[RMDB]
RNA sequence: GGGAACGACUCGAGUAGAGUCGAAAAUUGAGCCUACGGGUUCGCGCAAGUAAGCUCCGUACAUUCAUGCCCGAGGGGGUGUGCGGGUAACCAAUCGGGAUAAGGGGACGAACGCUGCUGGCGGUGUAAUCGGACCACGAAAAACCAACCACCAGAGGAUUGAGAUUUUCUUCGGAAAAUCUCAAUCAAAAGAAACAACAACAACAAC
Reactivity to 2A3 in 0.01 (KOAc 150mM, MgCl2 10mM, bicine 150mM(pH8.5), 24C), signal-to-noise 1, nucleotides 027 to 156: u090u070g000a010g010c000c010u050a080c190g040g040g000u030u030c040g000c030g000c080a150a090g110u250a170a020g070c030u000c010c000g000u020a000c000a010u050u040c010a010u030g020c040c000c000g000a040g000g000g010g000g010u030g000u010g000c000g010g050g020u060a020a010c030c030a050a300u050c020g010g000g020a010u060a050a010g000g000g000g000a000c010g010a100a020c030g040c030u050g030c000u010g030g010c020g040g010u010g010u010a060a080u040c000g000g010a040c030c010a060c060g020a000a040a030a000a020c060c020a050a100c070c000a010c000c010a000g030a000g080